[RMDB]
RNA sequence: GGGAACGACUCGAGUAGAGUCGAAAAAGAUGCUGCAGUUAAAAAGUCCGUAGUCAUAGAAGGGCAAAGAGAGAUGCGAGGUCUCACAGUGCGAUGAUGGAGGAGCCGAUGGGGAACAUAGUAUACCAUCGAGCCGUAAUUUCGAUUACGGCUCGAUAAAAGAAACAACAACAACAAC
Reactivity to DMS in 0.01 (KOAc 150mM, MgCl2 10mM, bicine 150mM(pH8.5), 24C), signal-to-noise 2, nucleotides 027 to 126: a080g000a050u030g000c030u000g060c050a030g020u000u020a050a050a060a160a070g020u010c010c040g000u020a100g000u040c040a100u070a110g000a140a030g000g000g010c040a040a030a100g000a120g010a010g010a030u000g000c060g000a110g010g020u000c020u000c030a120c130a040g020u010g040c020g000a070u010g000a090u020g000g000a120g000g000a010g060c050c000g000a050u040g000g000g000g010a060a050c180a040u010a180g000u000a060u010a090c120c040
Reactivity to 2A3 in 0.01 (KOAc 150mM, MgCl2 10mM, bicine 150mM(pH8.5), 24C), signal-to-noise 2, nucleotides 027 to 126: a000g050a050u040g000c000u070g000c010a210g030u090u120a050a200a020a040a010g080u000c010c000g070u080a020g130u180c000a000u080a230g070a060a040g050g020g000c000a050a010a000g080a000g020a000g030a000u020g080c000g030a050g030g000u000c000u080c030a000c040a080g030u000g170c080g030a110u050g030a000u080g090g160a000g020g020a000g000c000c070g060a030u030g050g000g000g020a000a000c000a000u010a010g170u090a050u020a300c010c000
An RNA of 177 nucleotides, treated with DMS and 2A3 and read out base by base. The RNA was probed in 150 mM KOAc, 10 mM MgCl2 and 150 mM bicine (pH 8.5) at 24 C. The DMS profile rests on 2,211 reads. As a SHAPE reagent, 2A3 marks flexible, mostly unpaired nucleotides at the ribose 2'-OH. Source: RMDB library RFM100, as collected in RNAgym. The 2A3 profile rests on 738 reads.